[RMDB]
RNA sequence: GGGAACGACUCGAGUAGAGUCGAAAAUUUGCCCGCUGGGGGCGGGAUCUGGGCGCUGCGAUUGGCAUCAAGCUGGAGCUUGUCCAUCAGCCUGUCAUUCCGGCGGUUGCGGCGCUGACGCUCGUUAGUCCGUAAUUAGUUUCGACUAAUUACGGACAAAAGAAACAACAACAACAAC
Reactivity to DMS in 0.01 (KOAc 150mM, MgCl2 10mM, bicine 150mM(pH8.5), 24C), signal-to-noise 3, nucleotides 027 to 126: u010u000u000g020c040c010c010g040c110u000g020g020g000g000g020c030g010g010g000a050u010c100u020g000g000g020c010g020c080u000g000c030g020a090u010u000g030g020c150a120u010c110a050a080g010c000u010g020g020a120g010c040u000u010g010u000c060c040a060u000c090a080g000c020c040u000g030u000c090a160u000u000c090c080g000g010c020g000g010u000u010g000c030g000g010c020g020c050u000g000a110c070g000c050u000c040g000u000u010a110
Reactivity to 2A3 in 0.01 (KOAc 150mM, MgCl2 10mM, bicine 150mM(pH8.5), 24C), signal-to-noise 2, nucleotides 027 to 126: u020u010u110g050c000c010c010g030c090u120g010g080g000g000g060c000g000g000g000a040u100c060u090g010g010g040c050g010c060u030g000c000g130a150u040u150g090g000c000a040u070c080a130a050g020c030u050g040g010a030g050c020u060u060g050u010c050c000a060u120c000a020g010c000c010u030g040u050c030a100u100u090c020c000g020g010c020g000g000u040u040g000c010g000g000c000g000c020u040g020a030c030g010c040u050c010g080u050u100a010

The record gives the reactivity of an RNA of 177 nucleotides to DMS and 2A3.
For DMS the reverse transcriptase was MarathonRT.
The data come from the RNA Mapping Database (RMDB), library OK2TST.
For 2A3, 2,438 sequencing reads were counted.
Conditions: 150 mM KOAc, 10 mM MgCl2 and 150 mM bicine (pH 8.5), 24 C.